[RMDB]
RNA sequence: GGGAACGACUCGAGUAGAGUCGAAAAGCGGCUGGCAUGUCGUCCGGGCAUAAAGUCAUAUCGCCUGAACAGAGAACAUGUUACUGACUUUGAAACGCGAUUUUAUAAUUUGCUGUCCAAAAAUACGCCUUGAGUAUGUGUUCGCACAUACUCAAGGAAAAGAAACAACAACAACAAC
Reactivity to 2A3 in 0.01 (KOAc 150mM, MgCl2 10mM, bicine 150mM(pH8.5), 24C), signal-to-noise 3, nucleotides 027 to 126: g020c000g050g000c150u110g030g000c010a010u030g010u020c020g000u000c010c030g000g010g000c010a040u080a080a190a000g130u130c040a060u030a030u120c090g010c000c000u030g040a040a020c020a040g110a010g030a160a000c000a010u020g010u030u020a030c030u020g210a140c000u070u040u080g060a070a070a020c040g000c000g010a010u000u070u080u050a300u090a100a060u030u030u180g030c020u020g030u040c000c010a030a010a090a060a000u100a040c070g060
Reactivity to DMS in 0.01 (KOAc 150mM, MgCl2 10mM, bicine 150mM(pH8.5), 24C), signal-to-noise 2, nucleotides 027 to 126: g020c030g010g000c120u000g030g020c000a030u000g010u000c050g020u000c010c010g020g010g000c010a070u000a020a110a140g010u000c190a080u000a040u010c210g010c000c000u000g010a010a020c030a200g010a170g000a110a030c010a010u000g000u000u000a070c040u000g000a120c010u000u000u010g010a100a090a110c170g020c010g030a010u000u000u000u030a080u010a070a050u010u000u000g020c010u000g020u030c000c030a000a030a060a060a100u000a120c210g020

Background:
An RNA of 177 nucleotides, treated with 2A3 and DMS and read out base by base. The DMS profile rests on 1,631 reads. Values cover nucleotides 27 to 126. For DMS the reverse transcriptase was MarathonRT. As a SHAPE reagent, 2A3 marks flexible, mostly unpaired nucleotides at the ribose 2'-OH.